[RMDB]
RNA sequence: GGGAACGACUCGAGUAGAGUCGAAAAGAUAUGGAACAGAACUACAGUCCAUUACACAACAGCUCGGAAACGAGACAUGUGUUCUGGACUGCUGUUCCUAAGUCAAAGUGCAUCUUCGGAUGCACAAUCGUGGGUCAAUGUUCGCAUUGACCCACGAAAAAGAAACAACAACAACAAC
Reactivity to 2A3 in 0.01 (KOAc 150mM, MgCl2 10mM, bicine 150mM(pH8.5), 24C), signal-to-noise 1, nucleotides 027 to 126: g030a060u040a080u170g000g030a000a010c020a050g000a030a060c160u290a080c300a000g020u040c010c000a040u000u010a000c010a000c020a080a110c070a120g000c010u000c010g020g020a060a100a040c040g010a000g030a020c060a080u090g000u010g000u010u020c020u020g000g000a010c000u000g000c000u000g000u020u000c000c010u060a170a020g060u030c060a070a120a000g000u030g020c000a000u000c000u070u110c300g210g000a010u000g000c020a000c000a000a020
Reactivity to DMS in 0.01 (KOAc 150mM, MgCl2 10mM, bicine 150mM(pH8.5), 24C), signal-to-noise 1, nucleotides 027 to 126: g000a030u000a300u000g010g030a040a010c000a050g000a040a050c050u020a250c020a020g010u000c000c000a010u000u010a000c010a000c010a040a050c280a220g000c000u000c030g010g000a080a040a120c000g030a000g000a000c070a080u020g000u000g000u000u000c000u000g000g000a030c020u000g000c000u000g000u000u000c020c030u010a000a110g000u000c080a050a100a110g000u000g000c020a000u000c000u010u000c130g060g000a000u020g000c010a010c020a020a000
Structure probing data (2A3 and DMS) for a 177-nucleotide construct. For DMS, 798 sequencing reads were counted. For 2A3, 1,607 sequencing reads were counted. For DMS the reverse transcriptase was MarathonRT. High DMS reactivity at an A or C suggests that its Watson-Crick edge is free. Reactivities are given for positions 27 through 126.